This 207-nucleotide RNA was probed chemically with 2A3.
Conditions: 150 mM KOAc, 10 mM MgCl2 and 150 mM bicine (pH 8.5), 24 C.
For 2A3 the reverse transcriptase was SuperScript II with manganese.
The data come from the RNA Mapping Database (RMDB), library M2RFPK.
For 2A3, 1,027 sequencing reads were counted.
RNA sequence: GGGAACGACUCGAGUAGAGUCGAAAAAGCCUGGUCGAUACGUCGACCAUGCAAUGCCGCCACAACGGCUUCCUGGCGUGGCGGAUCUCAUCCAAUGGAGCAACGCUCCGGAUACGUCCGGAGCGAAAAAAGCUCUGCUUCUUCGGAAGCAGAGCAAGAAGCUAUAGAAGUUCGCUUCUAUAGCUUCAAAAGAAACAACAACAACAAC
Reactivity to 2A3 in 0.01 (KOAc 150mM, MgCl2 10mM, bicine 150mM(pH8.5), 24C), signal-to-noise 1, nucleotides 027 to 156: a010g150c010c000u010g000g000u000c000g010a010u000a070c170g090u020c010g000a000c010c000a000u010g000c000a010a130u100g000c000c020g000c000c000a000c010a040a030c020g030g000c000u130u160c010c020u040g010g000c000g000u000g010g040c010g000g000a030u030c020u000c040a130u110c040c090a050a160u130g010g000a020g020c020a000a080c000g000c010u020c000c020g030g010a040u030a030c160g050u010c010c020g000g000a000g000c010g020a000a000a000a000a000a000g000c000u000c000u000g000c000u000u000c010u040u020c130g110g020a000a000g000c010a000g000a000g010c000a000a010